[RMDB]
RNA sequence: GGGAACGACUCGAGUAGAGUCGAAAAGGAAGCUUCGGCUUCCAAAAAGAUAUGGAACUUUGUCGUUCGAUCGGAAACGAUUCGAAAGCGAUUUGGUUCCUAAGUCAAAAAUCUGGUUCGCCAGAAAUCUUCAUAUGAUGUUCGCAUCAUAUGAAGAAAAAGAAACAACAACAACAAC
Reactivity to DMS in 0.01 (KOAc 150mM, MgCl2 10mM, bicine 150mM(pH8.5), 24C), signal-to-noise 3, nucleotides 027 to 126: g000g000a010a000g010c000u000u010c230g060g000c000u000u010c000c010a020a050a090a130a040g000a050u000a300u010g000g000a020a000c010u000u000u000g000u000c000g020u010u000c010g010a010u000c010g000g000a180a080a200c010g010a030u000u010c010g010a060a100a080g030c020g020a010u000u000u000g000g010u000u000c000c000u010a050a100g010u020c040a040a110a090a090a090u010c000u000g000g010u000u010c210g010c000c000a020g000a020a110a090
Reactivity to 2A3 in 0.01 (KOAc 150mM, MgCl2 10mM, bicine 150mM(pH8.5), 24C), signal-to-noise 2, nucleotides 027 to 126: g000g010a020a010g010c010u080u160c240g150g010c020u000u030c010c030a070a040a000a000a000g010a000u060a010u050g020g000a000a000c010u100u060u060g010u000c010g030u100u000c000g000a010u020c000g000g000a090a080a050c010g030a070u220u300c030g050a190a100a090g130c020g010a010u000u040u060g000g000u010u000c000c010u010a140a020g040u020c030a000a000a020a040a300u050c000u010g070g000u050u060c170g040c070c000a000g030a070a100a040
Structure probing data (DMS and 2A3) for a 177-nucleotide construct. For 2A3 the reverse transcriptase was SuperScript II with manganese. The 2A3 profile rests on 2,943 reads. For DMS the reverse transcriptase was MarathonRT.